[RMDB]
RNA sequence: GGGAACGACUCGAGUAGAGUCGAAAAGCAAAUAUUGUCUUAAUUACUUAGGCUAAAAGCAAUAAGUAUUAAAGCGGGACAAGGCAUCGACAUUUGAUACAAAUAUUGAUCAAUGGAUGUCUUAUUUAAACCUCAUCCGGCUUCGGCCGGAUGAGAACUUACAAUACACGUUCGCGUGUAUUGUAAGAAAAGAAACAACAACAACAAC
Reactivity to DMS in 0.01 (KOAc 150mM, MgCl2 10mM, bicine 150mM(pH8.5), 24C), signal-to-noise 1, nucleotides 027 to 156: g040c030a070a070a120u020a050u010u000g000u000c040u000u000a090a090u000u000a030c010u010u010a000g000g000c000u000a070a140a130a210g000c010a080a130u010a020a040g020u000a030u000u010a090a050a100g020c040g000g000g040a080c030a000a040g000g010c010a000u000c000g030a170c040a060u000u000u020g010a060u000a160c050a050a130a130u000a160u000u010g020a050u000c010a020a010u000g000g010a030u000g020u000c000u000u010a040u010u000u010a040a040a160c070c000u010c000a010u010c010c010g010g020c010u000u010c300g040g050c030c010g000g000a000u020g010a010g000a000a000
Reactivity to 2A3 in 0.01 (KOAc 150mM, MgCl2 10mM, bicine 150mM(pH8.5), 24C), signal-to-noise 4, nucleotides 027 to 156: g030c020a030a070a070u190a070u160u120g020u040c020u030u110a110a100u120u030a030c010u030u010a010g070g000c010u100a170a150a070a000g030c040a060a280u040a050a000g010u000a040u050u100a160a060a040g060c090g020g020g000a020c030a040a010g000g000c000a000u010c010g140a120c020a060u080u070u160g020a020u160a110c060a040a170a050u270a180u140u230g000a000u000c010a000a020u000g010g000a000u000g000u000c000u000u000a000u010u070u050a060a070a040c010c000u000c000a000u000c000c010g020g000c010u040u050c080g140g000c000c000g000g010a000u000g000a000g000a000a000
The record gives the reactivity of an RNA of 207 nucleotides to DMS and 2A3. For 2A3 the reverse transcriptase was SuperScript II with manganese. The DMS profile rests on 2,598 reads.